Chemical mapping of a 207-nucleotide RNA with 2A3. The data come from the RNA Mapping Database (RMDB), library OK3TST. 2A3 adducts were read by reverse transcription with SuperScript II with manganese. The reactions ran in a buffer of 150 mM KOAc, 10 mM MgCl2 and 150 mM bicine (pH 8.5), at 24 C.

RNA sequence: GGGAACGACUCGAGUAGAGUCGAAAACAGGACUUGCAGCGAAACGAUCCGGAUCUCGCCGCCAGGACGCGGCUUAUCGAUCCCCUGAUAGCCCAUUAUCAUCUGCGCCUGGGCGAUGAGAGCACCGCGCUGAGCGCUUUCCAGCGCAUCGUUAAUAAUCUUGUAGCACGUUCGCGUGCUACAAGAUAAAAGAAACAACAACAACAAC
Reactivity to 2A3 in 0.01 (KOAc 150mM, MgCl2 10mM, bicine 150mM(pH8.5), 24C), signal-to-noise 1, nucleotides 027 to 156: c050a040g150g000a040c070u070u260g000c030a010g000c020g050a010a010a220c020g040a020u020c040c000g010g000a010u010c010u000c010g000c010c000g000c010c010a020g010g040a070c010g020c050g060g030c030u100u110a120u040c000g030a200u060c000c000c000c060u090g010a040u050a040g040c000c000c020a060u120u210a080u140c070a040u120c040u180g010c000g000c000c010u040g000g000g040c000g020a010u040g000a000g000a000g100c010a020c070c000g020c010g050c000u060g030a050g030c040g060c020u190u170u010c050c080a000g010c000g000c020a040u060c020g000u020u020a170a000u150a040